[RMDB]
RNA sequence: GGGAACGACUCGAGUAGAGUCGAAAAACGAGGUACGCCUCGAAAAUAUGACCGGUGUCAUAGCCUCUAGCACACAGAGGUCGCGUGGGUUCAACUCCCCCCCUUAUCCGAGGGUAUCGGAAACCAAAAAACACAAUUUGGUUCGCCAAAUUGUGAACAGACGUGGUAUGUUCGCAUACCACGUCUGAAAAGAAACAACAACAACAAC
Reactivity to 2A3 in 0.01 (KOAc 150mM, MgCl2 10mM, bicine 150mM(pH8.5), 24C), signal-to-noise 1, nucleotides 027 to 156: a000c010g000a000g040g030u050a050c130g030c060c010u010c010g030a080a060a020a000u060a020u040g000a000c010c040g180g030u090g030u200c040a030u010a060g010c020c010u010c060u040a070g040c160a050c000a000c000a030g030a010g030g000u000c080g050c010g030u060g020g000g000u040u170c040a040a130c080u040c010c010c010c010c010c010c000u010u100a020u000c000c000g000a000g020g000g010u040a000u000c000g010g000a010a010a010c040c000a020a160a000a040a020a000c020a000c000a020a000u000u000u000g000g000u030u000c020g080c040c000a010a000a000u000u000g000u000g000a000a020